[RMDB]
The record gives the reactivity of an RNA of 207 nucleotides to 2A3.
Conditions: 150 mM KOAc, 10 mM MgCl2 and 150 mM bicine (pH 8.5), 24 C.
Values are in units of 0.01, from 0 to 300, in steps of 10.
For 2A3, 678 sequencing reads were counted.
RNA sequence: GGGAACGACUCGAGUAGAGUCGAAAAGCCUCCUCGCUUCCAUAGAAAGGGGACGGGGCAGAUCGCAAGUGCUACAACCGAGCGGUGGUAUCUGUCAAACUAAGCAGCAACUGCACAUCAAUUGACUAAACGAUGCCGAUCUUCGGAUCGGCAUCAACUGUAACGGAACGUUCGCGUUCCGUUACAGAAAAGAAACAACAACAACAAC
Reactivity to 2A3 in 0.01 (KOAc 150mM, MgCl2 10mM, bicine 150mM(pH8.5), 24C), signal-to-noise 2, nucleotides 027 to 156: g010c010c010u000c000c000u000c000g040c030u060u030c010c000a070u140a110g300a160a090a000g030g020g020g000a020c010g000g010g000g000c130a060g030a100u040c060g090c080a150a000g050u020g020c000u040a120c020a010a080c050c040g040a050g080c040g040g020u020g000g040u080a070u060c060u050g080u100c050a040a100a130c060u100a100a060g000c010a000g000c020a070a040c020u020g010c030a080c000a100u200c060a070a190u120u110g060a040c040u090a020a120a080c140g010a000u000g000c000c000g000a000u000c000u000u030c120g100g010a000u020c040g020g040c000a000u000c000a000a000